[RMDB]
RNA sequence: GGGAACGACUCGAGUAGAGUCGAAAAAAGUCACCCUCCUCGCAUCGCAAGUUCGUGCUUGCGACUUACACGUAGGGCGAGGGGUGGGCGAAAGUUGCCAUGAGACCGUAACUUUCGUAGUCAUUCAAAAACUACAAAGCCUUCGGGCUUUGUAGAACACACCAUCUUUGUUCGCAAAGAUGGUGUGAAAAGAAACAACAACAACAAC
Reactivity to 2A3 in 0.01 (KOAc 150mM, MgCl2 10mM, bicine 150mM(pH8.5), 24C), signal-to-noise 5, nucleotides 027 to 156: a010a000g140u090c060a070c020c000c000u020c000c010u000c000g010c010a040u010c010g010c010a020a010g000u220u250c150g230u300g090c010u000u000g000c010g010a000c000u030u110a060c120a040c100g220u160a100g070g120g000c010g000a000g010g010g010g010u110g000g010g000c000g000a000a000a000g000u000u000g010c010c010a020u050g060a040g020a250c030c060g000u010a000a000c000u000u000u010c010g000u020a020g080u030c040a060u200u000c020a040a030a050a070a100c000u000a000c000a000a000a000g010c000c010u050u060c180g040g000g000c000u000u000u000g000u000a000g000a000a000
Reactivity to DMS in 0.01 (KOAc 150mM, MgCl2 10mM, bicine 150mM(pH8.5), 24C), signal-to-noise 1, nucleotides 027 to 156: a020a020g010u000c020a080c010c010c010u000c000c020u010c020g010c190a060u000c000g050c010a010a040g030u000u010c250g060u000g030c000u000u000g000c000g050a060c090u000u000a080c140a170c040g000u000a110g000g020g050c010g000a040g000g060g000g020u000g010g010g020c000g020a030a040a030g020u010u000g000c000c000a300u000g000a270g070a120c150c100g030u000a010a010c010u000u000u000c030g020u000a060g000u010c120a030u010u000c030a090a000a090a170a130c000u000a000c000a010a000a010g000c000c010u000u010c300g030g010g040c030u000u020u000g020u010a010g000a050a140
Conditions: 150 mM KOAc, 10 mM MgCl2 and 150 mM bicine (pH 8.5), 24 C. Chemical mapping of a 207-nucleotide RNA with 2A3 and DMS. The 2A3 profile rests on 3,739 reads.